The data come from the RNA Mapping Database (RMDB), library M2PK90. Chemical mapping of a 177-nucleotide RNA with DMS and 2A3. As a SHAPE reagent, 2A3 marks flexible, mostly unpaired nucleotides at the ribose 2'-OH. 2A3 adducts were read by reverse transcription with SuperScript II with manganese. The reactions ran in a buffer of 150 mM KOAc, 10 mM MgCl2 and 150 mM bicine (pH 8.5), at 24 C. For DMS the reverse transcriptase was MarathonRT.
RNA sequence: GGGAACGACUCGAGUAGAGUCGAAAAAGAAAGAGAGCGUAGCACACACACAGAGUAAGUCUGACACACACCUACGCUACAUGUGUGUGUGAAGUCGAGAUAUCGACAAGUGUGUGUGAUGAAAAAAGAAUCAUAGAAUGUUCGCAUUCUAUGAUUCAAAAGAAACAACAACAACAAC
Reactivity to DMS in 0.01 (KOAc 150mM, MgCl2 10mM, bicine 150mM(pH8.5), 24C), signal-to-noise 9, nucleotides 027 to 126: a070g000a070a070a060g000a070g010a080g010c030g020u000a020g000c010a010c000a000c000a010c000a020c000a050g000a040g010u010a110a130g010u000c020u000g000a060c010a010c000a010c000a010c000c010u000a010c020g020c160u000a060c120a040u000g000u000g010u000g010u000g000u000g010a010a100g000u000c000g000a020g000a170u020a090u000c010g010a000c010a040a040g020u000g020u000g020u000g010u000g010a050u000g000a000a050a060a060a080a100
Reactivity to 2A3 in 0.01 (KOAc 150mM, MgCl2 10mM, bicine 150mM(pH8.5), 24C), signal-to-noise 9, nucleotides 027 to 126: a000g090a020a040a000g110a000g010a010g040c030g010u020a010g020c010a000c000a000c000a000c010a000c010a010g030a000g060u150a160a050g240u050c020u040g030a010c000a000c000a000c000a000c010c010u030a020c020g040c060u070a020c040a050u060g030u010g000u000g000u000g000u000g010a030a000g000u010c010g010a010g010a160u180a050u150c010g000a010c020a100a140g010u010g000u000g000u010g010u000g000a030u040g020a030a070a000a000a010a010